[RMDB]
RNA sequence: GGGAACGACUCGAGUAGAGUCGAAAAAAUAUUCCUGUACUACCUUAUACUGCGAUGGAGGGACGGAGAAGUGAAAGCAACACGUACGGACAGAAGUGUACGUCUAAGUGCGUAGGUAUUGGAACUGUCGGUGCCCUUAAUUCGUUAAGGGCACCGAAAAAGAAACAACAACAACAAC
Reactivity to 2A3 in 0.01 (KOAc 150mM, MgCl2 10mM, bicine 150mM(pH8.5), 24C), signal-to-noise 1, nucleotides 027 to 126: a000a070u300a000u090u000c000c000u050g060u010a050c000u000a000c010c010u280u000a000u000a170c000u000g050c020g000a000u160g070g000a040g020g010g000a010c080g100g000a070g010a100a070g030u080g000a020a040a040g130c000a000a130c000a000c000g000u060a000c040g000g030a000c010a040g180a170a110g130u030g010u110a010c020g000u000c000u000a090a000g000u010g100c000g000u000a050g060g000u030a070u060u070g040g050a120a120c060u000g050
Reactivity to DMS in 0.01 (KOAc 150mM, MgCl2 10mM, bicine 150mM(pH8.5), 24C), signal-to-noise 2, nucleotides 027 to 126: a050a210u070a110u040u030c050c000u010g040u000a080c060u010a030c180c050u020u000a050u000a170c050u000g040c020g010a060u010g000g000a030g010g010g000a130c010g020g020a110g010a080a000g030u000g000a120a040a110g000c070a070a040c220a020c070g000u000a020c040g000g020a030c070a040g010a040a070g040u040g000u000a060c110g000u020c110u000a060a050g030u020g030c050g000u010a020g020g010u020a100u000u010g000g000a050a100c040u000g000

An RNA of 177 nucleotides, treated with 2A3 and DMS and read out base by base. 2A3 adducts were read by reverse transcription with SuperScript II with manganese. The reactions ran in a buffer of 150 mM KOAc, 10 mM MgCl2 and 150 mM bicine (pH 8.5), at 24 C. DMS adducts were read by reverse transcription with MarathonRT.